Chemical mapping of a 207-nucleotide RNA with DMS and 2A3. 2A3 adducts were read by reverse transcription with SuperScript II with manganese.
RNA sequence: GGGAACGACUCGAGUAGAGUCGAAAAAAGCUUCAACGCCUUUUUUUCCAAUCUUCAUUAGCACCGGGCUAGGGAGUAAGCCCGUGGAACCUUAGUUUUGUUCCCUCGGGACUUACUUGUGGUUCCUGUGGUGCACUCCUGACCCUGCUGCUUUGAACAAUUGAUCAAAGUUCGCUUUGAUCAAUUGAAAAGAAACAACAACAACAAC
Reactivity to DMS in 0.01 (KOAc 150mM, MgCl2 10mM, bicine 150mM(pH8.5), 24C), signal-to-noise 1, nucleotides 027 to 156: a010a030g010c020u000u030c280a170a160c170g080c080c010u020u010u020u000u000u000u000c040c040a110a200u010c080u010u010c010a120u000u000a000g030c000a030c060c130g000g000g030c000u000a110g070g030g010a060g070u000a060a300g010c010c000c010g060u010g000g000a010a020c030c010u000u010a040g020u000u010u000u000g010u000u010c010c000c100u000c240g040g000g010a040c000u000u010a020c020u010u010g040u010g000g010u000u000c000c010u000g030u000g040g010u000g020c300a040c050u000c050c010u010g000a070c200c010c030u000g090c070u010g000c010u000u000u010g010a190a250
Reactivity to 2A3 in 0.01 (KOAc 150mM, MgCl2 10mM, bicine 150mM(pH8.5), 24C), signal-to-noise 3, nucleotides 027 to 156: a000a000g090c090u280u210c120a180a080c140g050c030c030u040u020u020u020u010u040u050c010c020a090a140u060c050u080u020c020a080u080u070a020g010c010a020c020c030g030g020g000c060u080a050g050g010g010a000g040u080a070a010g000c000c000c010g010u010g000g010a000a000c000c000u040u000a030g040u090u130u110u210g100u150u040c010c010c040u080c130g070g000g000a000c000u010u020a010c010u020u040g090u070g110g000u000u010c000c010u040g150u280g040g020u100g030c040a010c010u000c000c000u040g050a080c000c000c000u000g020c040u010g000c000u020u000u050g000a030a030

The RNA was probed in 150 mM KOAc, 10 mM MgCl2 and 150 mM bicine (pH 8.5) at 24 C.